[RMDB]
RNA sequence: GGGAACGACUCGAGUAGAGUCGAAAAAUGACCAUGGACUAUUUGAUGGUCGAAUUAUCCUUAAGGCUAUCAUAUAGUCGAAUUAUCCUUAAGGCUAUCAUAUGGUCGAAUUCGUUUUUGGCUAACCAUUUACCGAGGUAUUCGUACCUCGGUAAAUAAAAGAAACAACAACAACAAC
Reactivity to DMS in 0.01 (KOAc 150mM, MgCl2 10mM, bicine 150mM(pH8.5), 24C), signal-to-noise 5, nucleotides 027 to 126: a070u030g000a020c030c030a020u010g000g000a020c000u000a000u010u000u000g000a010u000g010g000u000c010g010a060a080u030u050a060u060c160c140u020u010a130a230g000g000c020u000a000u000c020a030u010a110u010a010g010u000c020g000a120a070u020u010a060u020c010c020u000u000a090a120g000g000c090u010a030u050c150a070u030a070u010g000g000u010c010g010a090a100u030u020c090g000u010u000u010u000u000g000g000c070u020a080a110c140c060
Reactivity to 2A3 in 0.01 (KOAc 150mM, MgCl2 10mM, bicine 150mM(pH8.5), 24C), signal-to-noise 7, nucleotides 027 to 126: a000u070g010a010c020c020a030u070g070g000a000c010u000a020u010u020u020g030a010u010g010g020u020c020g000a000a030u220u110a140u300c080c050u050u110a080a070g000g000c000u010a010u020c020a040u050a020u010a070g030u020c010g000a000a010u140u080a050u100c010c020u090u160a140a110g080g000c040u100a070u090c060a090u080a030u140g000g000u010c030g010a070a080u180u070c040g070u020u010u030u040u060g050g000c030u020a050a030c060c010
About this RNA
Structure probing data (DMS and 2A3) for a 177-nucleotide construct. High DMS reactivity at an A or C suggests that its Watson-Crick edge is free. For DMS the reverse transcriptase was MarathonRT. The DMS profile rests on 9,981 reads. For 2A3, 6,692 sequencing reads were counted. The RNA was probed in 150 mM KOAc, 10 mM MgCl2 and 150 mM bicine (pH 8.5) at 24 C.